[RMDB]
RNA sequence: GGGAACGACUCGAGUAGAGUCGAAAAGUUACUGCAGCACGGAUUCUUUGCAGACGACCUAACGCUACUUGCGAGGCACACAGAAAGGGAUGUCAUCAACCACACACUACAAUGCGGCCUAAACGUGUAAUAUUAUGCGGUUCGCCGCAUAAUAUUAAAAAGAAACAACAACAACAAC
Reactivity to DMS in 0.01 (KOAc 150mM, MgCl2 10mM, bicine 150mM(pH8.5), 24C), signal-to-noise 9, nucleotides 027 to 126: g010u010u020a090c040u000g020c030a050g000c070a060c070g020g010a070u020u020c040u000u010u010g000c050a050g000a090c080g000a110c040c030u010a060a090c070g000c030u010a070c070u010u020g000c030g020a100g000g010c050a050c060a060c090a090g000a060a100a100g000g000g010a070u010g010u020c040a030u010c070a070a120c100c040a060c070a050c050a070c080u010a060c120a060a060u020g010c050g000g000c020c030u000a030a080a070c080g000u030g010
Reactivity to 2A3 in 0.01 (KOAc 150mM, MgCl2 10mM, bicine 150mM(pH8.5), 24C), signal-to-noise 9, nucleotides 027 to 126: g030u050u090a070c030u050g010c010a030g020c020a010c070g100g010a090u120u040c030u050u100u150g010c020a030g020a090c020g070a070c010c020u050a110a030c030g020c030u090a090c050u100u090g020c020g030a040g000g040c020a010c000a000c010a050g090a090a070a010g060g020g020a050u060g050u080c030a050u020c010a040a070c020c010a020c000a010c000a010c040u120a030c060a050a110u100g030c020g020g030c010c010u060a080a070a020c040g020u040g000
An RNA of 177 nucleotides, treated with DMS and 2A3 and read out base by base.
Source: RMDB library OK1LIB, as collected in RNAgym.
For 2A3, 17,949 sequencing reads were counted.
The reactions ran in a buffer of 150 mM KOAc, 10 mM MgCl2 and 150 mM bicine (pH 8.5), at 24 C.